An RNA of 207 nucleotides, treated with 2A3 and DMS and read out base by base.
[RMDB]
RNA sequence: GGGAACGACUCGAGUAGAGUCGAAAACCAAUAUGGAUUAUUGGCUAUAUAUUGGCUAUAAUCAAUACUGGCCCAUUGCCAUAUUGGCCUAUGGCCAUAUUGGCUUAUGGCCAUUCUAUUGAACCUGGCUAUUAGCCAUAUUGGAUAUUGCCUAUAGUGCUGAUAAUAUAUUCGUAUAUUAUCAGCAAAAAGAAACAACAACAACAAC
Reactivity to 2A3 in 0.01 (KOAc 150mM, MgCl2 10mM, bicine 150mM(pH8.5), 24C), signal-to-noise 6, nucleotides 027 to 156: c000c000a000a000u010a010u010g050g020a100u070u040a030u060u150g010g000c020u020a020u020a020u010a040u260u100g010g010c020u020a020u060a120a050u030c000a000a000u020a030c120u010g020g000c030c050c050a020u020u050g000c010c010a030u060a160u180u180g000g000c010c020u160a160u150g010g010c000c010a000u010a030u020u050g000g020c020u030u050a030u020g000g000c000c000a000u030u010c030u050a080u040u110g040a060a060c030c060u010g020g000c010u010a030u060u040a060g010c000c000a000u000a000u000u000g000g010a020u020a060u160u140g050c000c010u000a130u000a160g150
Reactivity to DMS in 0.01 (KOAc 150mM, MgCl2 10mM, bicine 150mM(pH8.5), 24C), signal-to-noise 3, nucleotides 027 to 156: c000c010a020a040u000a020u000g000g020a070u000u000a040u000u020g030g020c000u000a060u010a140u000a110u000u010g000g010c050u000a070u010a070a100u000c020a030a010u000a010c080u000g040g030c010c010c110a200u000u000g000c000c010a110u000a090u000u000g040g030c030c040u000a110u010g030g010c000c010a030u000a010u000u000g010g020c100u000u010a030u000g020g010c000c000a010u000u000c050u000a150u000u020g030a060a150c060c070u010g020g020c030u000a080u000u000a040g010c000c000a040u010a010u000u000g000g020a190u000a050u000u000g010c000c020u000a130u000a140g000

The data come from the RNA Mapping Database (RMDB), library OK3TST.
For 2A3, 7,834 sequencing reads were counted.